Chemical mapping of a 177-nucleotide RNA with 2A3 and DMS. The data come from the RNA Mapping Database (RMDB), library OK2TRN. The 2A3 profile rests on 68,399 reads.
[RMDB]
RNA sequence: GGGAACGACUCGAGUAGAGUCGAAAAGAGGUUACGGAGUUAGGAGACUAACUGGACAACCAUGCACUCUCCAGUUAGUCAUCUAGAGAGUUCUGUCUCUAGAUCUGGAGUGCAGAGUCAGAGGCGGGCAGAGGAGAUUAUUCGUAGUCUUCUCUGCAAAAGAAACAACAACAACAAC
Reactivity to 2A3 in 0.01 (KOAc 150mM, MgCl2 10mM, bicine 150mM(pH8.5), 24C), signal-to-noise 9, nucleotides 027 to 126: g060a020g030g020u080u070a040c110g030g020a050g020u060u080a050g060g050a060g010a030c000u010a010a000c000u010g000g030a020c020a060a030c050c030a040u080g000c030a030c030u060c010u000c010c000a000g000u030u040a020g020u040c020a020u000c000u010a020g010a000g000a010g060u270u120c080u200g120u060c000u000c000u010a020g000a040u000c020u030g010g010a030g000u030g000c010a010g010a010g080u040c030a010g000a030g100g050c020g030g070
Reactivity to DMS in 0.01 (KOAc 150mM, MgCl2 10mM, bicine 150mM(pH8.5), 24C), signal-to-noise 9, nucleotides 027 to 126: g010a080g010g010u000u000a110c110g010g000a060g010u000u000a060g000g010a160g010a100c000u000a010a020c010u000g010g010a090c160a060a100c080c060a140u000g000c040a050c050u000c110u000c020c010a020g000u000u000a050g010u010c090a030u000c000u000a010g000a020g000a050g010u010u010c200u010g000u000c000u000c000u000a020g000a080u000c050u000g000g000a050g010u000g010c020a050g000a100g010u000c070a070g000a080g000g010c070g010g000